[RMDB]
RNA sequence: GGGAACGACUCGAGUAGAGUCGAAAAGUUUAAGUUCGCUUAAACAAAAAACCGUAGGCGUAACAUCCCAUUGUCAGUCCUGAGUCUUCGAAAGAGGACGAAAGGACUUGGAUUUAUGGGUGGCCUAAACGGAAAAAGCAACCCUUCGGGGUUGCAACUCUUUAUUGAGAUUCGUCUCAAUAAAGAGAAAAGAAACAACAACAACAAC
Reactivity to DMS in 0.01 (KOAc 150mM, MgCl2 10mM, bicine 150mM(pH8.5), 24C), signal-to-noise 2, nucleotides 027 to 156: g010u000u000u010a000a040g020u000u000c260g030c000u000u000a000a030a020c010a000a060a090a060a050a200c000c020g020u000a030g000g000c000g040u000a080a060c020a110u000c000c000c000a030u000u000g000u000c010a070g010u000c030c000u000g010a300g020u000c010u010u010c010g010a180a160a300g000a040g000g000a030c000g000a100a110a030g000g010a010c000u000u010g010g030a020u000u000u000a030u010g000g000g000u020g010g020c020c000u000a000a030a130c010g010g000a030a060a120a140a190g000c040a010a040c000c000c010u000u000c250g050g040g070g000u000u000g000c010a010a020
Reactivity to 2A3 in 0.01 (KOAc 150mM, MgCl2 10mM, bicine 150mM(pH8.5), 24C), signal-to-noise 2, nucleotides 027 to 156: g010u030u010u000a020a020g010u050u100c180g030c080u010u020a040a000a030c080a050a150a020a010a000a000c000c000g030u010a010g000g010c010g020u020a040a030c020a240u180c010c000c000a000u000u030g010u010c010a010g000u000c000c020u030g010a010g000u010c010u010u000c020g080a130a070a060g020a000g010g000a000c000g000a030a010a000g000g000a000c000u000u000g000g000a000u050u050u170a000u010g020g000g000u000g030g000c000c000u030a100a060a000c010g010g050a060a080a010a230a000g080c010a000a010c040c000c000u010u040c240g050g000g000g000u000u000g000c000a010a000